[RMDB]
RNA sequence: GGGAACGACUCGAGUAGAGUCGAAAAGAUAUGGAGCCACGAAGUUCAACAGCAUGAGUAUCGGAAACGAUACCAUGACAUGAACCGUGGCUCCUAAGUCAAAGUUAGGGGGUUCGCCCCCUAACAACGAUCUUAUUUGCUUCGGCAAAUAAGAUCGAAAAGAAACAACAACAACAAC
Reactivity to DMS in 0.01 (KOAc 150mM, MgCl2 10mM, bicine 150mM(pH8.5), 24C), signal-to-noise 2, nucleotides 027 to 126: g000a010u000a050u000g000g000a000g000c000c000a000c000g000a220a150g040u000u000c000a160a150c220a200g000c000a010u010g000a140g000u000a010u000c000g010g000a000a010a040c000g020a010u000a000c010c000a000u000g000a010c080a170u020g000a010a010c000c000g000u000g000g010c010u000c000c000u000a010a040g010u000c000a180a130a140g010u000u000a000g010g000g010g000g010u000u020c270g020c000c000c020c000c000u000a000a000c000a100a140
Reactivity to 2A3 in 0.01 (KOAc 150mM, MgCl2 10mM, bicine 150mM(pH8.5), 24C), signal-to-noise 2, nucleotides 027 to 126: g010a000u000a020u030g000g000a000g000c030c000a000c020g030a300a120g030u030u020c150a300a200c100a300g000c000a020u030g020a060g220u000a000u000c000g010g000a000a010a010c010g000a000u010a010c000c000a020u010g050a030c040a250u300g020a000a010c000c000g010u020g000g020c000u000c000c010u010a000a000g010u010c010a000a020a000g000u000u000a000g000g000g000g000g000u010u040c110g170c000c000c000c000c000u000a000a000c000a000a000